Chemical mapping of a 177-nucleotide RNA with 2A3. Source: RMDB library OK1LIB, as collected in RNAgym. Conditions: 150 mM KOAc, 10 mM MgCl2 and 150 mM bicine (pH 8.5), 24 C. High 2A3 reactivity points to a flexible backbone, as in loops and unpaired stretches. For 2A3, 319 sequencing reads were counted. Reactivities are given for positions 27 through 126.
RNA sequence: GGGAACGACUCGAGUAGAGUCGAAAACGCAGAACCUUUUUGGGGUGGCACCAUAAUGCACAGCACCUCUUUAAUAUUCGGUGCUUCAGGGAGGGUUUGGCCAAAAAGAUAUGCGCAGCACUGCGCCGUGCUCACGUCGGUUCGCCGACGUGAGCACAAAAGAAACAACAACAACAAC
Reactivity to 2A3 in 0.01 (KOAc 150mM, MgCl2 10mM, bicine 150mM(pH8.5), 24C), signal-to-noise 1, nucleotides 027 to 126: c040g070c060a000g120a000a000c000c000u070u000u000u000u070g000g000g140g000u140g000g000c090a260c170c000a080u300a150a210u300g000c060a000c010a260g000c000a000c000c000u050c000u110u000u290a090a090u300a230u190u270c070g000g000u000g000c000u080u050c000a000g000g000g050a070g080g150g030u140u280u030g180g000c030c000a020a020a020a020a020g010a000u070a070u100g060c010g000c000a010g230c180a000c070u070g000c000g000c000c160